[RMDB]
RNA sequence: GGGAACGACUCGAGUAGAGUCGAAAAUGGACGUUGUUCGCAACGUCCACAUACUGAGACGUACGUUAAACGUAUCGCGCGCAAAAGUGCAGUUAGAAUAAGUACCUAUUGAGUUCGCUCAAUAGAAGAUACCACACCGCUUCGGCGGUGUGGUAUCAAAAGAAACAACAACAACAAC
Reactivity to DMS in 0.01 (KOAc 150mM, MgCl2 10mM, bicine 150mM(pH8.5), 24C), signal-to-noise 1, nucleotides 027 to 126: u030g000g010a000c000g020u010u000g000u000u000c270g010c020a000a020c000g000u000c000c080a010c130a080u020a080c060u000g010a070g010a130c070g000u020a050c020g010u060u020a100a160a130c010g010u000a060u000c080g020c040g010c020g000c120a070a090a050a140g020u000g010c000a070g040u020u000a030g020a120a160u010a030a030g030u000a020c030c000u000a010u000u020g000a030g000u000u020c180g030c000u000c000a000a010u000a000g020a030a060
Reactivity to 2A3 in 0.01 (KOAc 150mM, MgCl2 10mM, bicine 150mM(pH8.5), 24C), signal-to-noise 1, nucleotides 027 to 126: u040g010g000a000c000g030u000u010g000u020u010c110g050c080a000a000c000g010u000c000c080a000c000a030u050a000c000u110g040a000g030a170c030g010u020a000c010g050u070u150a190a300a060c030g070u000a030u120c060g010c000g000c030g010c050a110a040a070a000g060u120g020c040a000g030u060u120a030g110a170a030u270a300a000g090u110a020c000c000u010a010u010u000g000a010g050u010u060c190g030c010u000c000a000a000u010a010g010a040a010

Chemical mapping of a 177-nucleotide RNA with DMS and 2A3. For DMS, 640 sequencing reads were counted. Source: RMDB library M2PK50, as collected in RNAgym.